RNA sequence: GGGAACGACUCGAGUAGAGUCGAAAAGAUAUGGACUUAGCUUUUGACGAGCAACCGGUCGGAAACGACCGCAAGCUCGAUAAGCUAAGGUCCUAAGUCAAAACAUCUUCUCUUCGGAGAAGAUGAACCAAGAUCUUACGUUCGCGUAAGAUCUUGGAAAAGAAACAACAACAACAAC
Reactivity to 2A3 in 0.01 (KOAc 150mM, MgCl2 10mM, bicine 150mM(pH8.5), 24C), signal-to-noise 2, nucleotides 027 to 126: g040a010u040a020u130g000g000a000c000u020u000a010g030c000u090u130u100u250g300a170c050g000a010g000c000a000a060c040c020g050g000u000c010g010g030a050a080a040c010g010a020c000c020g000c020a040a020g000c000u000c010g010a010u030a030a000g000c000u010a000a040g030g010u010c000c000u010a080a020g070u020c030a000a020a080a140c000a010u020c000u000u040c000u000c000u030u070c300g130g010a010g030a010a010g000a000u000g000a000a010
Reactivity to DMS in 0.01 (KOAc 150mM, MgCl2 10mM, bicine 150mM(pH8.5), 24C), signal-to-noise 2, nucleotides 027 to 126: g000a050u010a300u000g030g010a170c000u000u000a000g020c000u000u010u020u010g000a120c100g010a010g010c010a100a250c300c000g010g010u010c020g010g000a070a090a120c000g000a030c000c000g010c040a010a300g010c000u000c000g000a030u000a000a000g000c010u000a000a010g010g010u020c000c010u010a020a120g000u000c040a040a140a060a270c020a010u000c000u000u000c010u000c000u000u010c210g020g010a030g000a030a020g010a000u000g000a030a090